[RMDB]
The record gives the reactivity of an RNA of 177 nucleotides to 2A3 and DMS. For 2A3, 1,425 sequencing reads were counted. The RNA was probed in 150 mM KOAc, 10 mM MgCl2 and 150 mM bicine (pH 8.5) at 24 C. It was measured as part of the RMDB library OK2TRN.

RNA sequence: GGGAACGACUCGAGUAGAGUCGAAAAAGGGAAAACUCGUCGAGCUGAUUUUCAUAAUCGGCUGCCAUCACGCGAACUUUACGGUCAUCGCGUGGUGCACAACUGAUCACGGUUUGAUAAUCAAUCGGAGAGAGUCUGUAUUCGUACAGACUCUCUCAAAAGAAACAACAACAACAAC
Reactivity to 2A3 in 0.01 (KOAc 150mM, MgCl2 10mM, bicine 150mM(pH8.5), 24C), signal-to-noise 2, nucleotides 027 to 126: a000g130g000g010a110a130a100a090c110u100c110g110u060c070g030a030g030c150u010g010a000u000u010u010u180c050a060u110a170a010u000c020g040g000c020u030g020c040c010a000u020c010a000c010g010c000g000a040a030c020u160u160u210a120c190g040g000u030c080a090u010c020g000c000g000u000g000g000u020g000c000a010c000a030a110c070u080g050a130u170c060a040c150g000g030u030u040u030g030a030u060a080a040u040c020a010a060u000c050g010
Reactivity to DMS in 0.01 (KOAc 150mM, MgCl2 10mM, bicine 150mM(pH8.5), 24C), signal-to-noise 3, nucleotides 027 to 126: a120g000g020g010a100a050a080a080c030u010c060g020u000c050g020a050g010c150u000g000a050u000u000u020u000c090a060u010a050a030u000c010g020g030c020u000g010c300c020a000u000c000a000c010g010c010g000a040a080c030u000u000u000a080c260g000g000u000c150a110u010c000g010c000g040u000g000g000u000g010c160a020c080a020a030c030u010g000a040u000c150a160c180g000g010u000u000u000g020a060u000a020a050u000c050a030a100u020c080g000